RNA sequence: GGGAACGACUCGAGUAGAGUCGAAAAAUCUGGCCUCAUGUGGGUUGAGAGACAAACUCAGUUCCAAGGGUUUUCCUAUGACUGGAACUAGCUUAUGCUUCUUAAGAUCCUCACUAAACUGAGUAUGAGUUGUACGGAAUUUCGAUUCCGUACAACUAAAAGAAACAACAACAACAAC
Reactivity to 2A3 in 0.01 (KOAc 150mM, MgCl2 10mM, bicine 150mM(pH8.5), 24C), signal-to-noise 2, nucleotides 027 to 126: a000u020c030u020g050g030c020c010u040c030a100u160g020u120g010g040g020u020u100g020a010g010a000g010a020c030a050a110a030c010u040c060a010g000u040u000c010c000a020a010g060g000g000u050u040u090u140c010c020u120a180u200g180a060c110u030g010g010a000a020c010u010a010g000c020u080u150a120u200g020c040u050u060c000u040u040a020a030g020a060u020c010c000u020c010a050c030u180a080a160a030c050u030g040a010g070u070a130u170g130
Reactivity to DMS in 0.01 (KOAc 150mM, MgCl2 10mM, bicine 150mM(pH8.5), 24C), signal-to-noise 3, nucleotides 027 to 126: a090u000c040u010g000g020c040c020u010c060a080u020g020u000g010g000g010u000u000g010a110g020a040g000a060c180a070a060a090c030u000c100a040g050u000u000c030c050a060a150g000g010g010u000u000u000u000c010c000u010a080u010g020a110c210u010g010g000a020a010c050u000a050g000c080u010u030a090u000g020c070u000u000c030u010u000a030a170g010a050u000c050c040u010c060a050c050u000a040a020a050c110u000g010a030g010u000a060u010g000

The data come from the RNA Mapping Database (RMDB), library OK2TRN. An RNA of 177 nucleotides, treated with 2A3 and DMS and read out base by base. The reactions ran in a buffer of 150 mM KOAc, 10 mM MgCl2 and 150 mM bicine (pH 8.5), at 24 C. DMS adducts were read by reverse transcription with MarathonRT. For 2A3 the reverse transcriptase was SuperScript II with manganese.